[RMDB]
RNA sequence: GGGAACGACUCGAGUAGAGUCGAAAAGCACCGGGUCGAGCUGGCCGUCGGGCCCAGCCAAGCCCUCUACCGUGCGGAUGCUGUGCCCGGAGGCCAUCACGGCGAGCAUCGUGCAGGAUUUCACCGGCUUCAAGCAAAAAUUCGUUUUUGCUUGAAGAAAAGAAACAACAACAACAAC
Reactivity to DMS in 0.01 (KOAc 150mM, MgCl2 10mM, bicine 150mM(pH8.5), 24C), signal-to-noise 6, nucleotides 027 to 126: g000c040a030c010c070g010g010g010u000c000g000a090g030c080u010g000g010c000c000g010u000c020g000g000g000c000c040c010a010g010c000c110a230a180g000c020c010c040u020c160u040a110c210c210g000u000g010c070g000g000a190u030g000c000u000g000u000g000c000c000c010g000g000a050g010g000c000c010a020u010c020a090c050g000g000c030g010a110g020c100a090u040c110g000u000g000c040a050g000g000a120u010u000u000c020a210c010c000g010g000
Reactivity to 2A3 in 0.01 (KOAc 150mM, MgCl2 10mM, bicine 150mM(pH8.5), 24C), signal-to-noise 9, nucleotides 027 to 126: g030c020a010c020c030g100g040g010u020c020g010a030g010c030u010g010g000c000c010g090u040c000g000g000g000c000c060c000a000g000c010c020a070a020g000c010c110c000u050c050u120a250c120c120g080u140g020c060g000g010a040u160g000c000u000g000u010g000c000c000c000g000g000a010g000g000c000c000a000u000c000a000c000g000g000c010g020a050g020c030a100u150c040g020u030g020c030a050g050g100a060u020u050u030c090a110c040c010g040g000